[RMDB]
RNA sequence: GGGAACGACUCGAGUAGAGUCGAAAACAAUUUUAAGCGCUGCCUUAAAUGAAAGUGAAAGCUUAUAUAAAAGUAUUUUAGAACGAGCAAAUAUUGAGGUAGAUCAAUUAAACAAAGCUUAUGAAGACCAUGUGCAAAUAUUCGUAUUUGCACAUGGAAAAGAAACAACAACAACAAC
Reactivity to DMS in 0.01 (KOAc 150mM, MgCl2 10mM, bicine 150mM(pH8.5), 24C), signal-to-noise 2, nucleotides 027 to 126: c040a140a020u050u010u040u000a010a030g020c050g000c060u000g010c040c000u000u000a020a090a090u020g030a060a070a090g040u030g000a170a060a120g010c000u000u000a050u020a140u050a000a040a040a120g000u020a050u000u020u000u000a050g020a080a020c140g000a090g000c020a060a080a040u030a110u000u000g000a000g010g020u000a050g000a110u080c140a020a110u010u000a110a120a070c110a080a090a100g000c030u000u000a010u060g000a140a100g000a220
Reactivity to 2A3 in 0.01 (KOAc 150mM, MgCl2 10mM, bicine 150mM(pH8.5), 24C), signal-to-noise 5, nucleotides 027 to 126: c020a020a050u180u110u050u060a030a000g020c050g010c020u010g000c000c020u080u040a100a100a110u200g090a160a080a040g060u080g110a110a050a010g000c010u060u020a060u030a000u130a290a160a020a020g090u050a270u090u120u040u080a130g030a060a030c020g000a050g050c050a100a060a050u100a090u070u040g000a010g010g020u010a010g000a010u090c060a080a160u190u240a140a040a010c060a030a120a000g000c010u040u020a000u180g040a050a050g020a030
The record gives the reactivity of an RNA of 177 nucleotides to DMS and 2A3. The data come from the RNA Mapping Database (RMDB), library OK1LIB. For 2A3 the reverse transcriptase was SuperScript II with manganese. For DMS, 1,981 sequencing reads were counted.